An RNA of 177 nucleotides, treated with 2A3 and read out base by base. Source: RMDB library OK1LIB, as collected in RNAgym. For 2A3, 1,172 sequencing reads were counted.
RNA sequence: GGGAACGACUCGAGUAGAGUCGAAAACAAAACUGACCAACUAUGAGGUCAUACAUCGUCAUAGAAAAACAAAACAAAACUGACCAGAUAUGAGGUCAUACAUCGUCAUAUCAAACAAAACAACAAAGCUGAUUAUGACGUUCGCGUCAUAAUCAGCAAAAGAAACAACAACAACAAC
Reactivity to 2A3 in 0.01 (KOAc 150mM, MgCl2 10mM, bicine 150mM(pH8.5), 24C), signal-to-noise 2, nucleotides 027 to 126: c000a000a030a000a050c090u000g000a000c030c070a060a010c000u000a000u100g030a000g000g070u000c030a000u240a040c140a130u120c190g000u000c020a010u010a060g240a060a120a020a020a030c080a000a130a000a060c150a020a150a070a030c140u150g000a000c000c000a010g000a070u000a000u000g000a060g000g060u000c000a000u170a060c030a080u150c100g000u020c030a000u020a020u020c000a010a000a020c000a040a000a040a000c100a010a010c020a000a100a000